Structure probing data (DMS and 2A3) for a 177-nucleotide construct. For DMS the reverse transcriptase was MarathonRT.

[RMDB]
RNA sequence: GGGAACGACUCGAGUAGAGUCGAAAACGUACUGGGCUAGGGAUUUAACCGAACAUUAUGGGCAAUCGGGUCGGGCCUUUCUCUACCGGGUCAGGGUUUGGGCGGGUCACACUUAUUUUUGGGCGGGACGCUAUACGUAGUUCGCUACGUAUAGCGUAAAAGAAACAACAACAACAAC
Reactivity to DMS in 0.01 (KOAc 150mM, MgCl2 10mM, bicine 150mM(pH8.5), 24C), signal-to-noise 2, nucleotides 027 to 126: c090g010u010a050c140u000g010g000g020c160u010a120g000g000g000a230u010u010u010a100a180c020c020g000a050a090c140a070u010u000a070u010g000g000g000c070a080a100u010c100g000g000g000u010c080g020g010g040c050c050u010u020u000c040u010c020u000a090c050c050g000g000g020u010c200a130g000g000g010u010u010u010g010g000g000c110g000g000g010u020c100a020c090a020c090u010u000a100u000u020u010u010u000g020g010g010c040g010g000g010
Reactivity to 2A3 in 0.01 (KOAc 150mM, MgCl2 10mM, bicine 150mM(pH8.5), 24C), signal-to-noise 2, nucleotides 027 to 126: c040g000u070a020c050u100g000g010g060c050u090a050g070g000g010a020u100u020u270a140a030c020c000g010a090a010c030a030u170u240a100u190g050g050g000c050a090a090u070c040g020g010g020u020c000g000g090g000c040c000u010u140u000c010u020c000u060a050c000c030g120g000g000u080c060a010g000g000g000u050u270u100g110g040g200c210g020g030g000u080c020a010c000a030c060u160u210a190u260u270u060u170u080g080g000g050c060g040g020g000